RNA sequence: GGGAACGACUCGAGUAGAGUCGAAAACUGGCCUCCUCUCAACACUUUGAAGAUGUCCCAGUGUAUUCUGGUUUCCAUUUUUUAUAUUGGGAAGUUUGUGGUCAACCUAAUUCUGAUUCCUGUUCACCUUGUAUAAUGAAGGGUCUUUAUAUGUUAGAUUCGAGUGAUCAUUCGUGAUCACUCGAAUAAAAGAAACAACAACAACAAC
Reactivity to 2A3 in 0.01 (KOAc 150mM, MgCl2 10mM, bicine 150mM(pH8.5), 24C), signal-to-noise 1, nucleotides 027 to 156: c060u010g000g000c000c010u000c000c000u000c000u000c000a020a090c060a080c180u040u210u090g060a070a030g020a050u040g060u060c010c000c000a040g010u030g080u110a120u080u100c000u000g080g000u040u100u000c060c010a020u000u000u000u000u060u200a210u040a080u040u020g020g000g040a000a080g030u050u190u160g010u020g000g000u020c050a070a030c010c040u060a070a060u090u220c030u010g140a130u270u250c000c010u070g170u070u050c070a150c030c030u110u010g120u130a190u130a100a070u140g030a000a040g000g030g000u010c020u000u160u060a100u030a040u110g080u040u080a030g010
Source information: The record gives the reactivity of an RNA of 207 nucleotides to 2A3. The 2A3 profile rests on 373 reads. Source: RMDB library OK3TST, as collected in RNAgym. Conditions: 150 mM KOAc, 10 mM MgCl2 and 150 mM bicine (pH 8.5), 24 C.